[RMDB]
RNA sequence: GGGAACGACUCGAGUAGAGUCGAAAAGAAAGAAGGCGUAAUCGCCGUGUACGAGCUCCACGAUCAAUGAUUUUCUCGACGGCCGGCAUUGAUCGGACGUACCUCGGAUUGCCGCCUUACAAAGUUAAUACUAGAUUAAAUAAACCGUGCCGUCAAACGUAGUGCAGGUAUUCGUACCUGCACUACGAAAAGAAACAACAACAACAAC
Reactivity to 2A3 in 0.01 (KOAc 150mM, MgCl2 10mM, bicine 150mM(pH8.5), 24C), signal-to-noise 2, nucleotides 027 to 156: g230a050a160a000g100a000a000g010g010c000g000u000a030a050u110c150g050c130c000g050u000g000u030a000c010g000a060g010c070u050c120c090a150c080g000a000u000c000a000a000u030g130a090u050u090u270u190c250u190c160g010a010c000g000g040c000c000g030g050c010a000u000u000g000a030u010c000g000g000a010c000g000u020a010c000c000u050c030g010g000a000u000u110g030c060c050g000c000c020u010u020a070c050a050a070a000g050u210u170a090a130u080a170c070u070a070g160a280u230u160a120a090a110u170a110a060a000c000c000g090u150g000c000c000g000u000c000a020a000a090
Chemical mapping of a 207-nucleotide RNA with 2A3. The RNA was probed in 150 mM KOAc, 10 mM MgCl2 and 150 mM bicine (pH 8.5) at 24 C. Source: RMDB library OK3TST, as collected in RNAgym. For 2A3 the reverse transcriptase was SuperScript II with manganese.